[RMDB]
RNA sequence: GGGAACGACUCGAGUAGAGUCGAAAAUGGAGGUCCUGCAUCAGUUUGACCAGGUGAUGCCGGGGGUCAGCAUGCUCAUCCGAGGGCUUCCUGAUGUGACGGACUGUGAAGGUAAGCCUGCCAGAGGUCGUCCAUUAUGAUUCGUCAUAAUGGACGAAAAAGAAACAACAACAACAAC
Reactivity to DMS in 0.01 (KOAc 150mM, MgCl2 10mM, bicine 150mM(pH8.5), 24C), signal-to-noise 5, nucleotides 027 to 126: u010g010g000a170g010g000u000c000c010u000g000c020a040u000c040a030g010u010u000u000g010a080c040c020a190g000g020u000g010a070u010g010c020c110g000g010g020g000g010u000c070a050g010c140a070u010g000c060u000c050a080u010c060c100g000a160g000g000g000c020u000u000c050c000u010g000a050u000g010u000g000a070c190g010g000a030c030u000g010u000g010a140a080g000g010u010a080a140g010c020c010u000g010c030c040a090g000a090g010g000
Reactivity to 2A3 in 0.01 (KOAc 150mM, MgCl2 10mM, bicine 150mM(pH8.5), 24C), signal-to-noise 3, nucleotides 027 to 126: u170g060g020a050g020g010u020c000c010u030g030c010a020u010c020a040g100u110u150u080g050a060c030c030a030g050g030u060g090a080u190g060c030c010g170g000g000g020g050u050c010a010g000c020a020u120g010c010u030c050a120u070c060c070g080a210g000g040g000c000u030u020c000c010u010g020a030u070g050u050g070a060c140g020g010a010c040u070g060u070g100a050a000g040g000u060a030a020g040c000c010u030g020c030c030a060g020a020g120g100